RNA sequence: GGGAACGACUCGAGUAGAGUCGAAAAGAAGGAGAGUAGAUGAUUCGCGUUAAGUGUGUGUGAAUGGGAUGUCGUCACACAACGAAGCGAGAGCGCGGUGAAUCAUUGCAUCCGCUCCUAAACAAAACAGUAGCAUGUAGUUCGCUACAUGCUACUGAAAAGAAACAACAACAACAAC
Reactivity to 2A3 in 0.01 (KOAc 150mM, MgCl2 10mM, bicine 150mM(pH8.5), 24C), signal-to-noise 2, nucleotides 027 to 126: g180a030a010g000g000a000g000a000g000u000a000g000a000u000g000a000u000u000c000g000c000g000u010u070a000a000g000u000g000u000g000u000g000u000g000a010a000u000g000g000g000a000u000g030u070c110g000u000c010a000c000a000c000a010a000c020g000a000a000g000c010g020a030g000a010g010c000g000c000g010g020u000g000a000a000u000c000a000u000u000g000c000a000u000c000c000g000c000u000c000c000u010a010a020a010c030a010a060a000a000
Reactivity to DMS in 0.01 (KOAc 150mM, MgCl2 10mM, bicine 150mM(pH8.5), 24C), signal-to-noise 3, nucleotides 027 to 126: g010a100a010g000g000a020g000a010g010u010a300g020a010u010g000a000u020u000c000g000c000g010u000u050a040a050g000u010g000u000g010u000g000u000g000a030a070u010g000g000g020a010u000g010u010c220g020u020c000a010c000a020c000a020a050c050g020a050a050g050c000g010a160g000a150g010c000g000c090g000g000u010g000a030a010u000c000a010u000u020g000c000a000u000c000c010g010c000u000c000c000u000a010a070a050c050a020a050a020a070

About this RNA:
Conditions: 150 mM KOAc, 10 mM MgCl2 and 150 mM bicine (pH 8.5), 24 C. Chemical mapping of a 177-nucleotide RNA with 2A3 and DMS. For DMS the reverse transcriptase was MarathonRT. For 2A3, 13,817 sequencing reads were counted. Source: RMDB library OK1LIB, as collected in RNAgym.